[RMDB]
RNA sequence: GGGAACGACUCGAGUAGAGUCGAAAAUGUGUCUCCUUCGGGAGACACAAACGCUCGCAGCCCGAGGCCGCACGGGCAAGGCAGCGGCCAGCCAGCCAGCUAUGUGUUAUCAAUUCGUUGAUAACAACCUAUUCCUCGAAUUCGUUCGAGGAAUAGGAAAAGAAACAACAACAACAAC
Reactivity to DMS in 0.01 (KOAc 150mM, MgCl2 10mM, bicine 150mM(pH8.5), 24C), signal-to-noise 2, nucleotides 027 to 126: u000g000u010g000u000c000u000c000c000u000u010c170g010g020g010a020g000a010c010a010c000a010a060a090c130g000c010u000c100g050c110a170g000c020c010c000g000a090g010g010c030c030g040c040a110c090g010g000g000c060a090a030g000g000c070a070g000c050g010g010c000c010a070g000c010c040a040g000c030c040a070g010c090u010a060u020g010u000g010u000u000a010u000c010a010a040u000u010c190g010u000u010g000a000u000a000a020c020a050a190
Reactivity to 2A3 in 0.01 (KOAc 150mM, MgCl2 10mM, bicine 150mM(pH8.5), 24C), signal-to-noise 2, nucleotides 027 to 126: u060g000u000g000u000c000u010c000c020u020u120c200g110g010g010a000g020a000c000a000c000a020a000a000c030g030c010u020c030g050c050a050g030c000c010c020g010a050g030g040c030c000g030c040a060c040g050g000g000c040a060a090g080g000c030a030g030c000g040g000c010c000a010g030c020c010a000g020c000c010a020g000c030u150a100u220g120u030g000u020u020a010u010c010a020a000u060u060c200g040u040u020g000a020u000a000a000c020a010a000